[RMDB]
RNA sequence: GGGAACGACUCGAGUAGAGUCGAAAAUUAGAGACUGACCAGUUGCAGUCCUAAACAUCAAUUGGUAGAUUCAAACAAACAAUACUAAGUGAAUUGAAGCUUUAAUAUAGAUUUUUUUUUUGGAAACCGACGAGGUAGUAUUCGUACUACCUCGUCGAAAAGAAACAACAACAACAAC
Reactivity to 2A3 in 0.01 (KOAc 150mM, MgCl2 10mM, bicine 150mM(pH8.5), 24C), signal-to-noise 1, nucleotides 027 to 126: u080u000a020g020a000g000a080c000u000g000a000c100c000a000g000u020u040g000c000a010g000u000c070c030u090a030a120a010c040a100u180c000a010a060u070u040g000g000u020a040g020a130u000u060c000a000a060a120c030a000a280a030c070a100a040u150a290c100u190a120a190g120u000g100a130a100u000u060g020a100a080g040c000u110u190u170a130a060u270a040u150a140g060a250u100u000u000u000u000u000u030u030u050u030g000g040a000a000a030c030